RNA sequence: GGGAACGACUCGAGUAGAGUCGAAAAUCUGCGAAGAGCAUCAUCAAGAGCUGCUCCAUAACUGCAACCAUAACUAACAUGUAUAAUAUAAUUAUAACAGCUCGUAUAUAAAACAGCACAUCCAGUACAUGCUGACGCGUUUCGACGCGUCAGCAUGAAAAGAAACAACAACAACAAC
Reactivity to 2A3 in 0.01 (KOAc 150mM, MgCl2 10mM, bicine 150mM(pH8.5), 24C), signal-to-noise 1, nucleotides 027 to 126: u040c030u120g050c130g090a110a230g010a010g000c000a030u000c000a000u030c040a100a100g100a000g090c000u000g030c000u010c000c030a100u140a140a000c040u160g000c030a000a000c000c000a060u000a040a120c190u060a100a170c040a140u290g030u030a010u010a160a040u140a070u070a300a020u000u120a070u000a130a000c000a070g000c040u010c030g000u000a010u000a100u050a190a060a000a070c090a000g020c000a000c000a100u050c120c000a040g000u020a060

The record gives the reactivity of an RNA of 177 nucleotides to 2A3. The data come from the RNA Mapping Database (RMDB), library OK1LIB. 2A3 adducts were read by reverse transcription with SuperScript II with manganese. For 2A3, 305 sequencing reads were counted.